[RMDB]
RNA sequence: GGGAACGACUCGAGUAGAGUCGAAAAGCCAGACCUGAUGGAAGUGGAGGGUGACAUGUUAGUGAAUAAACAUGGAGAGAGAGUCUGCUGGAAUGGACAAGCCGGGGGCUUGGAGGGGCUCAGGCAAAGACGUCCUUCUUUUCGAAGAAGGACGUCUAAAAGAAACAACAACAACAAC
Reactivity to DMS in 0.01 (KOAc 150mM, MgCl2 10mM, bicine 150mM(pH8.5), 24C), signal-to-noise 1, nucleotides 027 to 126: g010c040c000a100g000a090c010c040u000g000a030u080g000g000a030a110g010u010g000g000a090g010g030g000u010g050a080c060a050u000g000u010u000a040g010u050g070a060a150u080a130a020a000c020a000u000g000g020a070g000a030g000a140g000a090g010u030c030u050g000c080u010g000g020a060a040u000g000g010a140c090a050a100g000c000c000g000g040g020g000g060c030u000u010g020g000a060g020g000g000g010c090u000c100a000g000g010c100a120a070
Reactivity to 2A3 in 0.01 (KOAc 150mM, MgCl2 10mM, bicine 150mM(pH8.5), 24C), signal-to-noise 2, nucleotides 027 to 126: g000c000c010a000g040a060c000c040u120g050a060u050g100g000a060a010g040u040g120g020a080g000g000g040u070g100a000c020a000u000g000u040u050a090g020u040g300a210a040u150a140a000a000c020a000u010g100g000a130g000a000g000a000g030a020g210u020c000u000g050c030u040g030g010a100a090u150g050g010a000c000a170a000g030c010c000g160g000g000g030g010c070u060u000g060g020a040g040g000g000g000c000u030c080a060g020g010c060a080a020
The record gives the reactivity of an RNA of 177 nucleotides to DMS and 2A3. DMS adducts were read by reverse transcription with MarathonRT. High 2A3 reactivity points to a flexible backbone, as in loops and unpaired stretches. Source: RMDB library OK1LIB, as collected in RNAgym. 2A3 adducts were read by reverse transcription with SuperScript II with manganese. Conditions: 150 mM KOAc, 10 mM MgCl2 and 150 mM bicine (pH 8.5), 24 C.